An RNA of 207 nucleotides, treated with DMS and 2A3 and read out base by base. DMS adducts were read by reverse transcription with MarathonRT. The DMS profile rests on 4,308 reads. The RNA was probed in 150 mM KOAc, 10 mM MgCl2 and 150 mM bicine (pH 8.5) at 24 C.
RNA sequence: GGGAACGACUCGAGUAGAGUCGAAAAUCUUUAACUCGCAGUACACGAUCAAGAAGUUUACCCCACGUUGAUACAGUGACAAUCACAUAAUCACCUUUUUUCAAUCCGCCAGUAUCAGACGCGGUAAACACCGGAUCUGUUGCGUUGCUGAUUGCUGCUAGAAUUUUGUUUUCGAACAAAAUUCUAGAAAAGAAACAACAACAACAAC
Reactivity to DMS in 0.01 (KOAc 150mM, MgCl2 10mM, bicine 150mM(pH8.5), 24C), signal-to-noise 2, nucleotides 027 to 156: u000c020u030u000u000a100a170c040u010c040g010c050a140g000u010a020c040a070c010g040a040u000c030a030a060g010a140a110g060u010u000u000a030c000c010c020c180a070c040g030u020u010g010a040u000a010c020a090g010u010g000a080c030a090a120u000c110a150c150a120u010a110a160u020c070a090c030c070u000u000u000u050u040u040c120a050a090u010c030c050g040c060c010a140g000u000a000u010c010a100g020a040c040g010c050g020g010u000a010a010a020c030a200c030c040g020g010a010u010c010u000g020u000u000g010c030g030u000u000g010c000u000g020a060u000u000g010c020u010g000
Reactivity to 2A3 in 0.01 (KOAc 150mM, MgCl2 10mM, bicine 150mM(pH8.5), 24C), signal-to-noise 4, nucleotides 027 to 156: u030c000u040u210u100a130a080c040u040c060g010c010a010g020u070a050c060a010c140g020a020u020c020a060a170g060a180a020g080u020u000u020a040c000c010c020c000a020c040g020u020u010g000a010u010a030c020a040g070u020g110a050c070a070a100u180c050a080c050a180u220a110a080u120c050a140c050c050u090u180u030u030u100u200c060a060a080u040c020c060g020c080c040a030g000u000a010u030c010a010g010a100c010g010c020g020g000u010a020a020a000c010a010c040c030g050g000a010u000c000u040g010u030u010g010c020g050u050u050g000c030u040g060a240u060u070g040c040u100g030